[RMDB]
RNA sequence: GGGAACGACUCGAGUAGAGUCGAAAAAAUAGCCUUGCUGCUUGUCCACCGCCUCUGGAUGCAUAGUGUGCAAUGAUAUCCGCGGUUGCCGCGGCGUGAACAUAGCCGAUUACGGCAAGUAGUGGAGCUUCGCUAUGCAUUUCGAUGCAUAGCGAAGAAAAGAAACAACAACAACAAC
Reactivity to DMS in 0.01 (KOAc 150mM, MgCl2 10mM, bicine 150mM(pH8.5), 24C), signal-to-noise 3, nucleotides 027 to 126: a030a030u000a060g000c010c030u000u000g000c080u000g000c020u000u000g010u000c000c050a100c090c090g000c060c060u010c070u000g010g010a100u000g020c040a030u000a050g000u010g000u000g000c040a100a060u010g000a070u010a150u000c000c010g010c030g000g030u000u010g000c030c020g000c020g010g010c030g010u000g010a080a110c220a070u010a140g000c010c000g010a280u000u000a270c080g000g000c010a010a040g000u000a130g010u000g010g000a040g000
Reactivity to 2A3 in 0.01 (KOAc 150mM, MgCl2 10mM, bicine 150mM(pH8.5), 24C), signal-to-noise 2, nucleotides 027 to 126: a000a000u140a020g040c020c000u020u070g080c060u050g040c010u040u050g010u080c010c040a030c030c030g030c010c000u040c050u110g020g060a030u060g020c000a040u050a120g090u110g020u010g100c020a070a070u110g000a060u070a070u090c000c020g000c040g110g100u030u030g010c010c000g000c000g010g010c000g010u080g050a050a030c090a090u160a110g000c000c000g040a010u090u280a080c020g000g000c010a010a000g060u090a000g000u020g040g020a040g040